[RMDB]
RNA sequence: GGGAACGACUCGAGUAGAGUCGAAAAGUGGACUUCGGUCCACCUACAUGGGGUCGAGCAAGGUCCGCACAGGACAUGCUGAAGCCUCCACGGCAACAGCCUGUGAUGGACUGAUGACCUCGACGGAGGCACCCUCAAUGAAAGCUUCGGCUUUCAAUUUAAUACACCGUUUCGACGGUGUAUUAAAAAAAGAAACAACAACAACAAC
Reactivity to 2A3 in 0.01 (KOAc 150mM, MgCl2 10mM, bicine 150mM(pH8.5), 24C), signal-to-noise 3, nucleotides 027 to 156: g000u010g000g020a010c020u070u110c300g070g010u030c000c000a000c000c010u070a050c030a200u200g000g000g020g000u020c020g040a040g110c100a130a090g070g000u000c010c000g020c010a000c020a010g000g030a070c070a200u260g010c000u040g000a070a030g000c000c000u030c050c050a060c030g010g020c010a140a090c020a280g080c010c000u030g010u060g030a300u230g010g020a020c020u050g020a080u160g020a010c000c000u020c000g020a040c080g000g010a010g020g010c010a060c000c010c000u010c050a070a220u100g010a000a000a000g000c000u070u100c300g090g010c000u000u050u000c000a000a000
Reactivity to DMS in 0.01 (KOAc 150mM, MgCl2 10mM, bicine 150mM(pH8.5), 24C), signal-to-noise 1, nucleotides 027 to 156: g020u000g000g000a020c000u010u000c270g040g040u000c010c050a020c000c000u020a040c090a080u000g010g020g010g000u000c000g010a100g000c140a120a270g050g000u010c000c010g000c040a070c040a040g000g000a050c050a100u000g030c000u010g000a100a240g000c010c010u010c040c040a250c030g010g040c000a190a190c030a150g000c000c000u020g030u010g010a130u010g020g020a030c000u000g010a040u000g010a080c070c010u000c040g000a040c010g010g020a050g070g000c020a100c010c020c030u010c050a030a150u000g010a020a020a010g010c000u000u000c270g050g010c020u000u000u000c010a010a190
About this RNA: Structure probing data (2A3 and DMS) for a 207-nucleotide construct. 2A3 adducts were read by reverse transcription with SuperScript II with manganese. The RNA was probed in 150 mM KOAc, 10 mM MgCl2 and 150 mM bicine (pH 8.5) at 24 C.